Structure probing data (2A3 and DMS) for a 207-nucleotide construct. Source: RMDB library M2RFPK, as collected in RNAgym. For DMS the reverse transcriptase was MarathonRT. The RNA was probed in 150 mM KOAc, 10 mM MgCl2 and 150 mM bicine (pH 8.5) at 24 C. Reactivities are given for positions 27 through 156.
[RMDB]
RNA sequence: GGGAACGACUCGAGUAGAGUCGAAAAAGAUCCACGCUACGGCGUGGAUCACACGUUCAUCCCUAUUGGGACGGAAGUAGGCAUAGUGCCGAAGGAACGCAUUAGUCAUGUGCUACGGCGCAUGACACACAUCAGAGUCACUUCGGUGACUCUGAAAGAUUACGUUCAGGUUCGCCUGAACGUAAUCAAAAGAAACAACAACAACAAC
Reactivity to 2A3 in 0.01 (KOAc 150mM, MgCl2 10mM, bicine 150mM(pH8.5), 24C), signal-to-noise 6, nucleotides 027 to 156: a000g000a000u000c000c000a010c000g020c010u040a050c280g120g000c000g000u000g010g000a000u000c000a000c000a000c000g000u000u010c000a030u040c010c000c000u130a300u180u300g000g000g000a010c020g020g010a030a010g020u020a010g020g000c030a110u150a260g160u180g180c010c000g000a000a010g010g020a000a000c020g000c030a060u050u220a060g000u000c000a000u000g000u000g000c000u010a040c300g100g000c000g000c000a000u000g010a000c000a000c000a000c000a060u030c000a000g000a000g000u000c000a000c000u050u120c200g080g000u000g000a000c000u000c000u000g000a000a010a010
Reactivity to DMS in 0.01 (KOAc 150mM, MgCl2 10mM, bicine 150mM(pH8.5), 24C), signal-to-noise 2, nucleotides 027 to 156: a110g010a020u020c000c000a010c010g000c000u010a120c260g110g010c000g030u000g040g010a010u000c000a020c060a020c030g010u000u000c030a190u000c000c000c000u000a150u000u000g030g010g020a030c030g000g000a020a120g020u010a180g000g010c100a150u010a150g010u000g040c000c000g040a180a090g010g010a100a080c050g000c040a100u000u020a130g000u010c010a000u010g010u000g030c000u000a070c230g120g040c020g000c010a000u000g000a000c010a040c060a050c100a100u010c010a030g010a020g000u000c000a020c000u000u000c270g020g000u010g010a000c010u000c020u010g000a010a000a070